Structure probing data (DMS and 2A3) for a 207-nucleotide construct.
The reactions ran in a buffer of 150 mM KOAc, 10 mM MgCl2 and 150 mM bicine (pH 8.5), at 24 C.
Source: RMDB library M2RFPK, as collected in RNAgym.
For 2A3 the reverse transcriptase was SuperScript II with manganese.
[RMDB]
RNA sequence: GGGAACGACUCGAGUAGAGUCGAAAACCUGUUAUCUGACCAAUAACAGAAUGCACCACAGCGUAAAAUCAUCUGAUUGGGUGAGUUGGUCGCACCGCCAUUUGGCGAACGAACGCCAAGCCUAAGCACUACGAGUAUGUGUUCGCACAUACUCGAAACAUCUGGAUACCUUCGGGUAUCCAGAUGUAAAAGAAACAACAACAACAAC
Reactivity to DMS in 0.01 (KOAc 150mM, MgCl2 10mM, bicine 150mM(pH8.5), 24C), signal-to-noise 1, nucleotides 027 to 156: c090c000u010g000u000u000a030u000c000u000g070a090c080c060a300a020u000a050a090c020a000g030a130a160u000g020c070a160c020c010a100c110a100g010c120g000u000a060a040a200a090u000c020a070u000c040u000g000a080u000u000g030g030g020u000g010a170g000u000u020g040g030u000c030g010c060a070c050c010g030c090c040a210u010u000u000g000g030c000g010a110a120c110g000a020a060c000g040c070c020a020a140g000c030c040u030a110a090g040c090a170c010u020a090c010g000a000g010u000a010u000g040u000g010u010u000c300g010c030a010c000a010u000a000c000u000c020g000a040a070
Reactivity to 2A3 in 0.01 (KOAc 150mM, MgCl2 10mM, bicine 150mM(pH8.5), 24C), signal-to-noise 3, nucleotides 027 to 156: c000c000u010g000u010u010a010u000c020u000g010a010c010c000a030a000u010a000a000c000a000g080a120a090u220g040c050a050c070c030a060c070a040g030c040g080u180a060a080a100a070u090c030a050u030c090u180g100a190u120u200g100g010g000u000g000a030g000u000u010g000g000u010c010g010c000a000c000c010g030c010c020a060u030u030u080g000g000c010g010a120a070c150g080a120a060c000g130c000c010a000a030g030c000c030u180a130a060g030c050a060c150u220a070c090g000a000g010u000a000u010g020u000g000u010u070c130g010c020a000c000a000u000a000c000u000c000g000a000a000